RNA sequence: GGGAACGACUCGAGUAGAGUCGAAAAGCAGUCGACUUCGGUCGACUGCAAAGAAUCACCACCAGCAGGUGAAAGCAGGAGGCAAAGAGCCAAAAUAAAUAAAAACGCUGAGCUUCGGCUCAGCGAACAAGAGUAUUUGUUUCGACAAAUACUCUUGAAAAGAAACAACAACAACAAC
Reactivity to 2A3 in 0.01 (KOAc 150mM, MgCl2 10mM, bicine 150mM(pH8.5), 24C), signal-to-noise 2, nucleotides 027 to 126: g010c000a000g010u000c010g020a020c050u080u130c250g060g000u000c000g000a000c010u010g000c000a010a010a020g010a020a050u020c040a000c040c010a030c040c090a030g110c070a040g040g010u030g040a040a060a000g050c050a040g000g180a030g040g010c040a130a170a090g090a070g010c030c020a030a030a030a010u150a000a060a020u100a020a070a030a000a000c020g000c000u010g000a010g000c000u040u040c180g020g030c010u020c020a000g000c000g000a010a000
Reactivity to DMS in 0.01 (KOAc 150mM, MgCl2 10mM, bicine 150mM(pH8.5), 24C), signal-to-noise 3, nucleotides 027 to 126: g000c000a020g000u010c000g000a010c000u000u020c160g030g010u000c000g020a010c010u000g000c000a010a020a050g000a150a120u000c060a110c040c010a110c090c040a090g000c080a080g010g000u010g000a030a070a150g030c090a080g010g020a110g000g020c030a030a090a110g010a120g000c030c060a070a030a060a090u010a040a070a080u010a040a040a100a110a160c010g000c000u000g000a000g010c000u000u010c170g020g010c000u010c000a010g000c000g010a010a020